[RMDB]
RNA sequence: GGGAACGACUCGAGUAGAGUCGAAAAGCUGUACGGUGUCACUUCCCUUGACCUGUGCAGAGCCGAGACGUUCAUUGGGGAGUUCAUGAACAAGGACCAGCGCCAGGUGAAGGUGCCUGUGGUGGGCGUGUAGACGGCAAUUCGUUGCCGUCUACACAAAAGAAACAACAACAACAAC
Reactivity to DMS in 0.01 (KOAc 150mM, MgCl2 10mM, bicine 150mM(pH8.5), 24C), signal-to-noise 1, nucleotides 027 to 126: g000c010u010g030u010a000c040g000g060u000g000u000c010a020c090u000u000c020c030c010u000u010g000a010c010c000u010g030u000g010c020a020g000a070g020c030c040g000a100g010a070c100g020u000u000c050a040u000u010g020g000g010g000a190g010u020u020c040a030u010g010a080a060c130a090a140g010g000a090c020c040a070g000c060g010c120c050a020g000g010u010g000a110a080g010g000u000g000c000c000u000g010u010g020g010u000g010g020g000c110
Reactivity to 2A3 in 0.01 (KOAc 150mM, MgCl2 10mM, bicine 150mM(pH8.5), 24C), signal-to-noise 1, nucleotides 027 to 126: g060c070u030g010u030a010c020g030g060u130g020u080c010a010c080u110u070c010c000c000u000u050g030a010c010c010u040g030u020g000c000a020g020a010g100c000c030g050a050g010a070c060g020u000u020c070a050u070u030g000g020g000g000a040g070u000u090c010a050u070g090a040a030c020a060a100g020g030a060c000c010a000g000c040g080c040c020a030g010g000u040g080a180a060g110g080u190g060c030c000u080g030u020g050g110u040g000g050g000c050

Structure probing data (DMS and 2A3) for a 177-nucleotide construct. For 2A3, 1,311 sequencing reads were counted.